The data come from the RNA Mapping Database (RMDB), library RFMREP. The record gives the reactivity of an RNA of 177 nucleotides to 2A3 and DMS.
[RMDB]
RNA sequence: GGGAACGACUCGAGUAGAGUCGAAAACCAAUACAAGUUUAAUGGCUACAUACGGCACUCAGUUUACACUUACAUUACAUAUGCAUUUUAACACAUCAACUAUAACACCUUUAUUUAAGUCUGUUGUCUAUUAGUAUAGCUUCGGCUAUACUAAUAGAAAAGAAACAACAACAACAAC
Reactivity to 2A3 in 0.01 (KOAc 150mM, MgCl2 10mM, bicine 150mM(pH8.5), 24C), signal-to-noise 6, nucleotides 027 to 126: c000c000a010a010u200a080c080a030a080g040u080u130u120a150a050u100g030g000c010u030a010c030a080u110a060c060g030g000c020a020c040u070c020a030g010u030u060u090a030c040a010c020u070u070a020c020a070u030u070a030c010a030u110a030u100g050c020a030u020u010u040u140a060a010c020a000c000a060u060c000a020a060c010u040a020u020a150a020c030a040c030c010u070u170u060a110u090u200u060a100a000g020u010c070u060g100u080u020g040u020
Reactivity to DMS in 0.01 (KOAc 150mM, MgCl2 10mM, bicine 150mM(pH8.5), 24C), signal-to-noise 3, nucleotides 027 to 126: c020c010a130a110u030a140c110a080a130g010u000u000u000a120a090u000g010g000c030u010a100c080a050u000a080c090g010g010c020a040c020u000c050a070g000u010u000u000a070c100a070c040u000u010a070c100a060u000u000a050c040a040u000a050u000g000c040a020u000u010u010u000a070a050c040a040c060a040u000c070a030a030c090u000a040u000a060a070c060a050c060c020u010u000u000a070u040u000u000a060a080g010u000c130u000g010u000u010g010u010
For DMS, 1,809 sequencing reads were counted. For 2A3 the reverse transcriptase was SuperScript II with manganese.